[RMDB]
RNA sequence: GGGAACGACUCGAGUAGAGUCGAAAAGAUAUGGACGGCCGAAGCUCAACAGCUAUAAUCGGAAACGAUUAUAGACAUGAGCUCGGGCCGUCCUAAGUCAAAAGGAUAUAGCUUCGGCUAUAUCCAAGGAACCAAUACUGUUCGCAGUAUUGGUUCCAAAAGAAACAACAACAACAAC
Reactivity to DMS in 0.01 (KOAc 150mM, MgCl2 10mM, bicine 150mM(pH8.5), 24C), signal-to-noise 2, nucleotides 027 to 126: g000a050u000a300u000g000g000a000c020g010g020c010c000g010a060a100g000c000u000c000a040a080c300a230g010c010u000a010u000a010a010u000c010g010g000a190a150a230c000g030a000u000u000a000u000a000g030a030c140a210u000g020a000g020c000u000c050g020g020g020c000c000g020u000c010c000u010a030a080g010u000c070a070a110a180a130g000g000a020u000a000u000a000g030c000u000u030c260g030g000c000u000a000u000a000u000c000c000a040a050
Reactivity to 2A3 in 0.01 (KOAc 150mM, MgCl2 10mM, bicine 150mM(pH8.5), 24C), signal-to-noise 1, nucleotides 027 to 126: g010a010u050a020u150g010g010a000c000g010g000c000c010g130a100a040g010c020u030c030a110a190c050a180g070c020u000a000u020a020a000u010c010g000g060a040a010a030c010g000a000u000u000a010u000a020g030a000c030a160u170g010a000g020c000u000c000g030g000g030c000c020g010u000c000c000u020a000a010g000u010c010a010a030a000a180g000g000a000u010a010u000a010g000c040u070u110c300g190g000c000u000a010u010a020u000c000c010a010a010